[RMDB]
RNA sequence: GGGAACGACUCGAGUAGAGUCGAAAAUGGGCGUCAUCAACGGCGAGGUAAUCGGUGACGCCAGAGAUGGAACUGUGUAAGCGGCCUCCGCCAAGGUCUUCUGCAGAUACAACUUCUCCAGUUGCGGCUUUAACCAGUGGUGGGCCAGCAAGGAAGAAAUUAUACGACAGUUCGCUGUCGUAUAAUUAAAAGAAACAACAACAACAAC
Reactivity to 2A3 in 0.01 (KOAc 150mM, MgCl2 10mM, bicine 150mM(pH8.5), 24C), signal-to-noise 2, nucleotides 027 to 156: u130g040g020g000c020g020u000c000a000u020c040a060a150c090g100g000c070g020a070g070g050u150a130a100u190c120g000g000u000g000a010c010g000c020c010a010g010a000g000a020u090g020g050a100a060c050u030g020u030g030u200a070a060g040c050g060g010c020c010u020c010c020g000c020c010a040a030g000g000u010c000u040u020c030u080g030c010a040g010a070u170a090c070a060a010c070u120u050c030u040c070c020a150g000u050u030g040c030g010g020c000u060u000u080a060a030c010c000a030g020u050g080g020u030g000g010g020c000c010a020g000c020a010a020g020g020a020a020g060a050
Reactivity to DMS in 0.01 (KOAc 150mM, MgCl2 10mM, bicine 150mM(pH8.5), 24C), signal-to-noise 2, nucleotides 027 to 156: u010g010g020g040c000g010u010c010a020u000c010a080a110c030g000g030c020g030a080g020g030u000a120a100u000c090g010g020u010g000a030c000g030c000c010a030g000a050g010a130u010g010g010a080a110c050u010g040u010g030u010a060a100g030c170g000g020c010c000u000c060c050g010c080c050a100a120g000g000u000c010u000u010c050u000g000c030a040g010a130u020a030c050a050a080c040u000u000c020u000c070c040a100g030u000u000g020c010g010g040c050u010u000u000a070a080c030c020a150g010u010g040g020u000g010g020g030c010c030a060g010c050a030a050g000g010a100a130g000a090